[RMDB]
RNA sequence: GGGAACGACUCGAGUAGAGUCGAAAAGUGCAGAAAGUGCAUGCCUGGUGCCAUACGAUGCUUUUCCAGAAAGUAGCUGCCACGAGACCACAGGACAAGGCGUCCCGCCACGCAGGGCCGGCCUGACCUACCAGUCAGGUUUCGACCUGACUGGUAGAAAAGAAACAACAACAACAAC
Reactivity to 2A3 in 0.01 (KOAc 150mM, MgCl2 10mM, bicine 150mM(pH8.5), 24C), signal-to-noise 2, nucleotides 027 to 126: g080u060g070c050a010g100a250a220a050g230u080g020c010a010u060g010c000c040u050g010g040u050g000c030c040a040u040a110c070g030a050u090g030c050u010u050u030u100c040c000a070g090a050a110a010g030u070a020g020c030u020g000c030c000a010c030g040a030g060a050c000c020a030c050a050g000g050a010c020a070a000g020g000c000g000u050c030c020c010g000c020c060a120c040g070c050a050g000g000g060c030c000g050g030c000c010u030g020a040c020
Reactivity to DMS in 0.01 (KOAc 150mM, MgCl2 10mM, bicine 150mM(pH8.5), 24C), signal-to-noise 3, nucleotides 027 to 126: g010u000g010c040a050g000a090a080a120g000u000g000c030a020u000g010c040c010u000g030g020u000g010c060c030a050u000a100c110g030a110u010g000c040u000u000u000u010c060c080a140g010a070a060a100g000u000a080g030c060u000g000c030c020a060c080g010a120g000a110c060c050a090c110a040g000g000a070c110a080a040g000g010c040g000u000c000c010c000g000c060c070a090c130g020c040a110g000g010g020c060c030g000g010c020c000u000g010a080c180
Chemical mapping of a 177-nucleotide RNA with 2A3 and DMS. Conditions: 150 mM KOAc, 10 mM MgCl2 and 150 mM bicine (pH 8.5), 24 C. Values cover nucleotides 27 to 126. The data come from the RNA Mapping Database (RMDB), library OK2TST. For DMS, 3,162 sequencing reads were counted.